[RMDB]
RNA sequence: GGGAACGACUCGAGUAGAGUCGAAAAGAAGGACGUAGGAGGCUGCGAUAAGCCUCGGGGAGCUGUCAACCGAGCUGAGAUCCGAGGAUGUCCGAAUGGGGAAACCCAGCCACAGUGAUGUGUGGUUAAGCAUAACGUAGUUCGCUACGUUAUGCUUAAAAGAAACAACAACAACAAC
Reactivity to 2A3 in 0.01 (KOAc 150mM, MgCl2 10mM, bicine 150mM(pH8.5), 24C), signal-to-noise 1, nucleotides 027 to 126: g090a050a040g000g000a010c020g020u020a020g050g060a050g010g030c020u000g010c000g060a120u020a040a010g040c000c000u000c000g000g000g000g000a040g000c010u000g050u060c030a150a300c170c010g010a010g030c000u170g290a000g000a000u000c000c000g000a010g000g010a020u010g010u000c010c000g030a040a050u090g000g000g020g040a000a030a060c010c000c000a020g000c010c000a000c000a000g080u120g080a100u090g020u000g010u010g070g050u050u040
Reactivity to DMS in 0.01 (KOAc 150mM, MgCl2 10mM, bicine 150mM(pH8.5), 24C), signal-to-noise 3, nucleotides 027 to 126: g020a180a270g000g010a030c010g020u000a020g020g010a060g010g000c020u000g020c020g000a030u000a020a140g010c010c010u000c000g000g000g000g000a010g010c000u000g000u000c040a100a300c050c030g000a010g030c010u000g000a190g010a020u010c020c000g000a050g000g000a010u000g000u000c000c020g010a040a120u000g000g010g010g010a100a090a190c000c010c010a110g000c010c000a010c010a050g010u000g030a140u000g010u000g030u000g000g010u000u000